RNA sequence: GGGAACGACUCGAGUAGAGUCGAAAAAGCUGGGGUGCUAUAAGGAAUCAGAAUAGCGAUCCUAUACUUAGAUGUGUCCAAACGGGAGCGGCCGCUCAGCAAUACCUAAAUCACAAGACACGAAUCCGAUGAAAACAUCAUUCGUGAUGUUUUCAUCAAAAGAAACAACAACAACAAC
Reactivity to 2A3 in 0.01 (KOAc 150mM, MgCl2 10mM, bicine 150mM(pH8.5), 24C), signal-to-noise 4, nucleotides 027 to 126: a000g020c040u050g000g020g020g040u080g020c020u060a040u040a240a060g080g040a070a110u080c020a050g130a220a100u090a060g040c040g020a030u010c000c000u050a030u020a110c020u060u040a050g060a200u140g030u010g010u050c010c000a140a100a030c070g030g000g020a060g060c040g040g030c040c020g020c010u030c010a010g010c000a010a040u050a070c010c000u040a070a040a050u120c060a070c030a170a060g030a040c030a000c050g030a050a050u020c030c060
Reactivity to DMS in 0.01 (KOAc 150mM, MgCl2 10mM, bicine 150mM(pH8.5), 24C), signal-to-noise 4, nucleotides 027 to 126: a080g030c100u000g020g010g000g020u000g020c030u000a040u010a130a130g010g000a110a060u000c120a100g010a180a090u000a060g000c080g010a070u010c020c000u000a080u010a080c060u020u030a050g010a140u010g010u000g010u010c000c060a060a090a140c090g000g010g010a100g020c050g010g000c040c040g000c050u000c020a050g020c040a040a070u000a110c010c010u000a010a030a080u000c120a080c180a050a110g000a060c080a030c040g000a080a100u010c170c070